[RMDB]
RNA sequence: GGGAACGACUCGAGUAGAGUCGAAAAGGGAUUGUUCCUGCUGUUUACAACAGAGCUUUGGGAACGAUUCAGUUAUUAUGCGAUGCGAGCCAUUCUGGUUCUGUAUCUGGUUGAUCAGGCCAACUCCCAAGGCGGUGGACUGGGUUGGACUCAGGCCGUCAAGUUGUGAAUUCGUUCACAACUUGACAAAAGAAACAACAACAACAAC
Reactivity to 2A3 in 0.01 (KOAc 150mM, MgCl2 10mM, bicine 150mM(pH8.5), 24C), signal-to-noise 3, nucleotides 027 to 156: g080g000g000a020u030u010g010u020u010c000c000u020g030c010u000g040u040u090u120a180c160a180a030c010a050g050a050g080c100u190u270u300g000g000g010a010a000c010g020a030u030u020c010a000g010u010u060a070u180u080a100u290g120c100g030a000u030g030c020g010a010g040c010c030a050u210u160c150u240g030g010u060u030c050u150g040u020a020u020c020u050g100g010u020u070g030a090u050c050a010g010g080c010c020a030a080c040u050c020c000c000a010a030g100g010c020g000g090u070g030g030a020c020u040g050g010g000u080u090g010g060a050c020u020c100a010g000g020c010c010
Reactivity to DMS in 0.01 (KOAc 150mM, MgCl2 10mM, bicine 150mM(pH8.5), 24C), signal-to-noise 1, nucleotides 027 to 156: g000g020g000a000u020u000g020u000u000c010c000u000g000c000u000g010u010u000u000a160c160a120a130c040a060g000a060g020c040u000u020u000g010g050g000a030a040c000g010a040u000u000c000a190g080u020u000a130u000u000a070u000g030c090g030a080u000g000c050g000a090g000c030c030a240u030u010c120u010g020g010u000u010c030u010g090u000a030u000c010u000g050g030u000u010g010a100u000c050a050g030g000c050c000a050a060c060u000c010c050c030a070a240g000g030c050g010g080u000g010g020a070c040u000g000g000g000u000u010g020g000a300c030u020c030a040g000g000c040c040
Source information:
Chemical mapping of a 207-nucleotide RNA with 2A3 and DMS. The reactions ran in a buffer of 150 mM KOAc, 10 mM MgCl2 and 150 mM bicine (pH 8.5), at 24 C. Values are in units of 0.01, from 0 to 300, in steps of 10.